The data come from the RNA Mapping Database (RMDB), library OK1LIB. Structure probing data (DMS and 2A3) for a 177-nucleotide construct. The DMS profile rests on 18,712 reads. Values cover nucleotides 27 to 126. 2A3 adducts were read by reverse transcription with SuperScript II with manganese. The 2A3 profile rests on 15,431 reads. The reactions ran in a buffer of 150 mM KOAc, 10 mM MgCl2 and 150 mM bicine (pH 8.5), at 24 C.
RNA sequence: GGGAACGACUCGAGUAGAGUCGAAAAGAAUAAAUAGUGUCUUGGAGCGCGCGGGGUAAACAUAUAUGGUUCAUAUAUGUCCGUAGGCGCGUAAAGAAAGCGCGUCGAAGCGAGAGAAGACUCGCAAGCCUAUUUAUCAUUUCGAUGAUAAAUAGGCAAAAGAAACAACAACAACAAC
Reactivity to DMS in 0.01 (KOAc 150mM, MgCl2 10mM, bicine 150mM(pH8.5), 24C), signal-to-noise 6, nucleotides 027 to 126: g020a110a080u040a090a060a090u030a090g000u000g000u000c020u010u010g000g000a300g000c010g020c030g000c020g000g000g000g000u030a070a100a030c010a000u000a000u000a000u000g000g050u030u050c030a020u010a000u000a010u000g010u000c020c030g010u000a140g010g000c000g010c010g010u000a040a080a140g010a110a110a170g000c000g020c010g010u000c010g000a080a110g010c000g000a040g010a300g000a090a050g000a030c010u000c040g000c130a090a150
Reactivity to 2A3 in 0.01 (KOAc 150mM, MgCl2 10mM, bicine 150mM(pH8.5), 24C), signal-to-noise 7, nucleotides 027 to 126: g040a030a050u250a140a050a060u190a060g070u050g020u030c020u020u080g120g060a130g050c000g000c000g000c010g010g010g010g080u170a030a100a020c000a010u000a000u000a000u010g300g080u150u140c030a000u000a000u010a010u000g010u020c010c020g020u030a050g010g000c000g000c010g000u010a010a000a040g080a020a040a020g010c020g000c000g010u020c020g040a100a020g000c020g000a000g000a010g030a070a030g040a030c000u000c040g020c070a060a040